Structure probing data (2A3 and DMS) for a 177-nucleotide construct. The 2A3 profile rests on 1,711 reads. Source: RMDB library M2PK50, as collected in RNAgym.
RNA sequence: GGGAACGACUCGAGUAGAGUCGAAAAGCUCUAUCCUUCGGGAUAGAGCAAACGCUACGAUUGACGGUGAAGCCGGACCUGACGUUCAGCAUAGUCGGGCUAAAAGUCACAUGUUCGCAUGUGACAACGAAGCAUACCUCUUCGGAGGUAUGCUUCGAAAAGAAACAACAACAACAAC
Reactivity to 2A3 in 0.01 (KOAc 150mM, MgCl2 10mM, bicine 150mM(pH8.5), 24C), signal-to-noise 1, nucleotides 027 to 126: g010c010u000c000u010a000u010c010c010u010u100c210g080g000g010a000u000a000g000a010g000c000a000a000a000c030g010c020u130a040c010g160a180u030u150g090a070c050g000g090u090g140a090a000g090c020c010g070g000a060c010c030u040g040a030c030g080u070u180c100a030g050c000a030u060a070g000u010c010g000g000g000c000u070a040a090a010a050g010u000c020a000c000a000u040g050u020u050c260g050c080a000u040g000u010g000a000c000a010a000
Reactivity to DMS in 0.01 (KOAc 150mM, MgCl2 10mM, bicine 150mM(pH8.5), 24C), signal-to-noise 2, nucleotides 027 to 126: g010c000u000c000u000a000u000c000c000u000u010c240g030g000g000a000u000a000g000a020g020c010a010a030a070c150g010c050u010a070c070g010a190u000u000g010a130c120g030g000u000g010a100a080g000c010c000g000g000a030c060c040u000g010a100c090g010u000u000c100a080g020c130a070u000a130g000u010c000g040g010g000c100u000a060a030a060a180g000u000c000a010c000a030u000g010u000u000c240g040c020a000u000g030u000g000a000c000a020a110